[RMDB]
RNA sequence: GGGAACGACUCGAGUAGAGUCGAAAACCGCAUCACCUGAUCACUGAUGGCUCAACGGUAUCCGGCGGUACAACUGAAUACUUGUAGCUGCCUUUUGAGCGGGUUGGCUGCAAUCCGAAACGGAGAGAAAACCUAAUUACGUUCGCGUAAUUAGGAAGUAUGUGGUUAUCUUCGGAUAACCACAUACAAAAGAAACAACAACAACAAC
Reactivity to 2A3 in 0.01 (KOAc 150mM, MgCl2 10mM, bicine 150mM(pH8.5), 24C), signal-to-noise 4, nucleotides 027 to 156: c010c000g010c010a040u060c010a000c030c020u040g060a050u030c020a010c040u040g010a020u030g080g000c020u020c020a040a030c030g040g000u040a050u040c020c010g050g020c050g010g080u100a080c070a130a050c100u210g090a160a080u140a210c040u020u040g000u020a010g010c000u000g000c020c000u050u050u060u100g040a010g010c040g000g010g000u150u240g020g000c000u020g020c000a010a020u000c000c000g050a160a170a150c070g060g000a020g000a020g030a030a110a040a040c000c000u000a000a000u000u000a000c000g020u020u050c220g000c010g090u000a000a000u000u000a000g010g000a000a010
Reactivity to DMS in 0.01 (KOAc 150mM, MgCl2 10mM, bicine 150mM(pH8.5), 24C), signal-to-noise 1, nucleotides 027 to 156: c020c000g010c020a130u000c060a130c010c000u010g010a110u000c040a030c110u010g030a020u010g010g030c030u000c040a110a050c080g000g000u000a050u020c020c020g020g010c020g040g030u030a120c100a110a110c060u010g010a040a050u000a060c050u010u020g020u000a070g000c000u020g030c030c030u010u020u000u020g040a080g000c080g040g020g000u010u000g040g060c040u020g020c010a070a140u010c040c020g020a100a100a070c010g010g030a070g010a300g010a100a060a100a140c000c000u000a000a020u010u000a020c000g030u000u010c290g000c020g020u010a020a020u000u000a010g020g020a030a060